[RMDB]
RNA sequence: GGGAACGACUCGAGUAGAGUCGAAAAGUGUCUUCAAUUCCGUAGUGCAUUGCAGUGUUUGUAGCAGCAGUCUGCAAGCAGUGCGGAAGUGAGGAUUCGUCAAAAGAAUUGCAGUUCGCUGCAAUUCGGAAAAUACAUGCUUCGGCAUGUAUUUUCCAAAAGAAACAACAACAACAAC
Reactivity to 2A3 in 0.01 (KOAc 150mM, MgCl2 10mM, bicine 150mM(pH8.5), 24C), signal-to-noise 4, nucleotides 027 to 126: g000u010g000u000c010u000u010c020a020a090u010u000c000c020g010u020a050g230u000g110c210a300u020u020g000c010a010g010u010g090u130u160u130g200u180a100g040c120a010g010c010a010g120u030c000u010g000c000a020a000g000c000a030g060u010g000c000g000g000a000a010g000u010g010a010g000g010a010u020u030c030g100u080c040a070a050a030a140g000a000a000u000u000g000c000a000g030u030u080c130g100c120u000g020c000a000a000u000u000c000
Reactivity to DMS in 0.01 (KOAc 150mM, MgCl2 10mM, bicine 150mM(pH8.5), 24C), signal-to-noise 3, nucleotides 027 to 126: g020u000g010u000c010u000u000c000a030a050u000u000c000c000g020u000a010g000u000g010c000a160u000u000g010c010a030g000u000g010u000u000u000g020u010a100g040c210a080g020c010a040g010u010c000u000g000c000a010a010g000c000a010g000u000g010c000g010g010a010a010g010u000g010a010g010g000a010u000u000c030g000u010c140a090a070a110a130g010a020a010u000u000g010c000a020g000u000u020c290g010c010u000g000c000a010a010u010u000c000